[RMDB]
The data come from the RNA Mapping Database (RMDB), library M2RFPK. This 207-nucleotide RNA was probed chemically with DMS and 2A3.

RNA sequence: GGGAACGACUCGAGUAGAGUCGAAAAACAGCGAAAGGCACAAGACUUCGAACAUCAUAGCAGUUAGUAGUUGCCUAAACCCAUUGCAAUAUAUGGGACAGUAGAGGUCGCAAGCCUAUACUGUGCGAAAAGUCGCAAGGUUUCGACCUUGCGACAACAACUUCUUAAGCUUCGGCUUAAGAAGUUGAAAAGAAACAACAACAACAAC
Reactivity to DMS in 0.01 (KOAc 150mM, MgCl2 10mM, bicine 150mM(pH8.5), 24C), signal-to-noise 2, nucleotides 027 to 156: a110c050a210g020c020g000a100a120a060g030g010c010a060c070a100a240g000a030c020u000u010c040g020a130a110c050a080u000c090a110u000a100g000c090a070g050u010u030a130g070u000a130g030u020u010g020c000c040u010a030a070a130c010c020c000a050u000u010g000c060a150a150u020a080u010a000u000g000g020g040a050c020a020g040u000a050g000a000g060g010u000c080g060c290a130a300g000c000c020u000a060u000a040c000u000g040u000g040c070g000a050a040a110a230g000u000c020g000c000a000a020g020g010u000u020u000c260g010a040c000c000u040u010g010c020g000a010c000a010a030
Reactivity to 2A3 in 0.01 (KOAc 150mM, MgCl2 10mM, bicine 150mM(pH8.5), 24C), signal-to-noise 4, nucleotides 027 to 156: a000c040a020g010c010g060a150a090a000g010g020c030a020c040a090a090g060a040c030u040u040c090g090a090a070c040a170u190c020a100u180a100g060c060a020g030u000u060a020g020u040a020g020u110u060g010c000c000u030a090a030a020c010c000c010a010u000u020g000c020a030a000u020a000u000a010u120g000g000g000a000c000a000g000u010a000g000a000g040g000u100c030g050c210a070a000g000c000c000u000a010u000a010c010u000g000u000g020c020g030a070a050a070a080g000u010c020g000c010a010a000g020g010u030u100u170c190g060a050c000c000u000u000g000c000g000a000c010a000a000

For 2A3, 2,734 sequencing reads were counted. The RNA was probed in 150 mM KOAc, 10 mM MgCl2 and 150 mM bicine (pH 8.5) at 24 C.